[RMDB]
RNA sequence: GGGAACGACUCGAGUAGAGUCGAAAAGAAAAGAGCGUAAUCGCGUCUUGACGUGAGUGAGCCUAGACUGUAGCCUAUCCCAAGUGGGAUAGCAUAACUCACAAUACGCUGAUCUACAGUCAAAAGACGCCACCGUGCUAUUCGUAGCACGGUGGCGAAAAGAAACAACAACAACAAC
Reactivity to 2A3 in 0.01 (KOAc 150mM, MgCl2 10mM, bicine 150mM(pH8.5), 24C), signal-to-noise 1, nucleotides 027 to 126: g180a020a120a020a000g070a000g000c000g000u000a000a230u030c000g000c000g000u000c060u110u300g200a080c000g000u050g000a020g000u070g060a000g000c000c010u020a120g000a000c060u000g080u040a040g090c090c080u000a000u000c000c000c000a090a010g200u300g160g000g000a000u000a000g000c000a050u020a070a000c000u000c000a020c000a000a000u050a000c000g000c100u020g000a090u020c000u010a000c000a000g000u000c030a000a000a130a000g050a050